RNA sequence: GGGAACGACUCGAGUAGAGUCGAAAAUGCUUUCACAUUAUGCAAAGCAGCUGCUGUGAACUUUGUCAAAAGAGGCACUUCCUGUGACCAAAUAUAAAACCUUGAUUUGAAUUCACAUGCAAAUGUAACGUAUUAGCCAUUUCGAUGGCUAAUACGUAAAAGAAACAACAACAACAAC
Reactivity to DMS in 0.01 (KOAc 150mM, MgCl2 10mM, bicine 150mM(pH8.5), 24C), signal-to-noise 4, nucleotides 027 to 126: u010g000c010u000u010u000c020a050c220a140u010u040a070u050g020c080a010a050a030g010c040a110g070c150u020g010c010u000g030u000g010a010a020c150u000u020u030g010u000c050a000a020a070a110g000a180g010g000c040a040c060u000u030c130c080u000g000u010g000a120c030c010a040a070a030u020a100u070a120a070a090a080c140c090u010u000g020a040u030u030u020g000a050a160u000u010c030a000c020a010u030g020c040a010a070a080u020g000u040a070
Reactivity to 2A3 in 0.01 (KOAc 150mM, MgCl2 10mM, bicine 150mM(pH8.5), 24C), signal-to-noise 9, nucleotides 027 to 126: u070g000c020u050u050u080c070a100c040a250u090u300a100u300g070c110a020a020a020g010c020a020g030c050u060g000c010u010g020u010g030a030a040c060u090u120u110g080u100c040a040a010a000a050g110a090g020g000c010a000c020u130u120c070c080u060g010u030g080a170c020c020a030a120a010u170a030u110a050a100a030a030c030c030u030u040g040a070u090u040u160g060a080a070u030u020c020a010c020a050u200g010c020a080a050a020u140g040u110a060

Chemical mapping of a 177-nucleotide RNA with DMS and 2A3. Values are in units of 0.01, from 0 to 300, in steps of 10. The 2A3 profile rests on 7,851 reads. The RNA was probed in 150 mM KOAc, 10 mM MgCl2 and 150 mM bicine (pH 8.5) at 24 C. 2A3 adducts were read by reverse transcription with SuperScript II with manganese. Reactivities are given for positions 27 through 126.